[RMDB]
An RNA of 177 nucleotides, treated with DMS and 2A3 and read out base by base.
The 2A3 profile rests on 932 reads.
Values cover nucleotides 27 to 126.
For DMS the reverse transcriptase was MarathonRT.
2A3 adducts were read by reverse transcription with SuperScript II with manganese.
RNA sequence: GGGAACGACUCGAGUAGAGUCGAAAAGACCGCCUUCUAUGCCGUGAUCGCCGUGCUGGCGGUGGCACCGCUGGCCUUGGGUGACCAGGGGUGGUAUGCCCAGUUGCUGGCCAGCCGGCCGAUGGUGUCCGUCAUUCCCUUUCGAGGGAAUGACGGAAAAAGAAACAACAACAACAAC
Reactivity to DMS in 0.01 (KOAc 150mM, MgCl2 10mM, bicine 150mM(pH8.5), 24C), signal-to-noise 1, nucleotides 027 to 126: g000a230c030c010g010c070c060u020u000c060u000a140u020g000c040c030g010u000g040a100u000c060g000c000c010g000u010g030c030u010g020g000c040g010g000u000g010g010c010a090c060c120g040c020u010g000g000c000c000u020u020g020g000g010u020g000a150c000c010a030g010g000g020g000u010g030g010u010a030u000g000c020c010c060a130g000u000u010g010c140u030g010g010c020c000a040g000c010c050g010g000c000c050g000a050u000g000g010u000g010
Reactivity to 2A3 in 0.01 (KOAc 150mM, MgCl2 10mM, bicine 150mM(pH8.5), 24C), signal-to-noise 1, nucleotides 027 to 126: g090a000c030c000g010c010c020u130u070c080u120a170u210g000c010c020g140u150g230a090u070c000g000c010c020g070u080g010c070u110g020g010c060g040g000u090g030g020c030a030c050c060g000c040u060g070g120c000c010u040u040g040g000g030u070g070a060c000c000a030g030g050g090g030u060g030g000u060a070u180g050c070c000c020a080g080u110u230g000c150u050g110g000c000c000a000g000c000c020g050g000c110c020g050a020u050g000g000u030g000